Description:
The record gives the reactivity of an RNA of 177 nucleotides to 2A3 and DMS. The RNA was probed in 150 mM KOAc, 10 mM MgCl2 and 150 mM bicine (pH 8.5) at 24 C. For 2A3, 3,773 sequencing reads were counted.
[RMDB]
RNA sequence: GGGAACGACUCGAGUAGAGUCGAAAAGAUAUGGACUUCCGGCUCUUUGAUCACCCGGUACCGAGGUAAAUAUCGGAAACGAUAUUUAAAUAUGGUACCGGGUGGGAGAGCCUGAAGUCCUAAGUCACUAUAUAUCAAGGUUCGCCUUGAUAUAUAGAAAAGAAACAACAACAACAAC
Reactivity to 2A3 in 0.01 (KOAc 150mM, MgCl2 10mM, bicine 150mM(pH8.5), 24C), signal-to-noise 3, nucleotides 027 to 126: g040a030u050a040u190g000g000a000c010u010u050c040c050g050g020c010u060c030u300u300u190g160a220u240c000a000c000c000c010g000g000u010a000c010c020g090a070g170g060u070a020a030a020u010a010u000c010g030g000a050a010a020c010g000a000u020a020u010u030u040a040a070a050u300a230u300g010g010u010a010c000c000g010g000g000u000g000g010g010a010g020a000g000c030c000u020g000a010a000g000u010c000c000u000a010a000g000u040c000a000
Reactivity to DMS in 0.01 (KOAc 150mM, MgCl2 10mM, bicine 150mM(pH8.5), 24C), signal-to-noise 2, nucleotides 027 to 126: g000a050u000a300u020g000g000a010c000u000u000c010c170g000g000c020u000c000u000u020u010g000a100u010c000a010c000c000c000g000g000u000a010c000c010g000a200g000g010u010a000a010a010u000a000u000c010g010g010a150a080a250c000g030a010u000a000u000u000u000a000a050a080u010a170u020g000g010u000a000c010c000g000g010g020u000g000g000g000a010g010a000g010c000c000u000g010a020a000g020u000c000c000u000a000a070g000u000c030a300